[RMDB]
The data come from the RNA Mapping Database (RMDB), library M2PK90. Structure probing data (DMS and 2A3) for a 177-nucleotide construct. Values cover nucleotides 27 to 126. For 2A3, 3,076 sequencing reads were counted.

RNA sequence: GGGAACGACUCGAGUAGAGUCGAAAAUAAAACAGUGCGUGGUAGCACUACCAUGACCAUGUUUCGGCUCAUGGUCAGCCGAGUACAGCUUCGCCUGUACUCAGCGAACAACAACAACAACAAAAAACUCUGUAAGGAUGUUCGCAUCCUUACAGAGAAAAGAAACAACAACAACAAC
Reactivity to DMS in 0.01 (KOAc 150mM, MgCl2 10mM, bicine 150mM(pH8.5), 24C), signal-to-noise 2, nucleotides 027 to 126: u000a040a040a040a080c190a010g010u000g000c000g030u010g010g020u010a160g000c020a000c000u010a060c070c020a130u010g000a020c010c000a090u010g000u000u000u020c170g010g000c200u000c000a020u000g010g020u000c070a030g000c000c020g010a020g020u000a010c000a020g000c030u030u000c210g000c200c010u010g010u000a000c000u000c000a020g010c000g010a120a090c060a030a040c050a000a060c020a040a020c020a000a020c050a040a070a070a070a050a050
Reactivity to 2A3 in 0.01 (KOAc 150mM, MgCl2 10mM, bicine 150mM(pH8.5), 24C), signal-to-noise 2, nucleotides 027 to 126: u120a000a040a010a000c050a010g000u000g020c020g020u080g130g180u190a060g000c000a000c010u010a010c010c020a020u050g000a000c000c000a020u060g160u100u130u210c140g040g000c030u020c020a010u010g000g000u000c000a010g000c000c030g010a010g000u000a010c000a000g010c040u130u210c130g090c060c010u000g000u000a000c000u010c010a000g000c020g040a030a010c010a020a000c000a010a000c000a010a000c000a030a010c040a060a100a050a020a010a050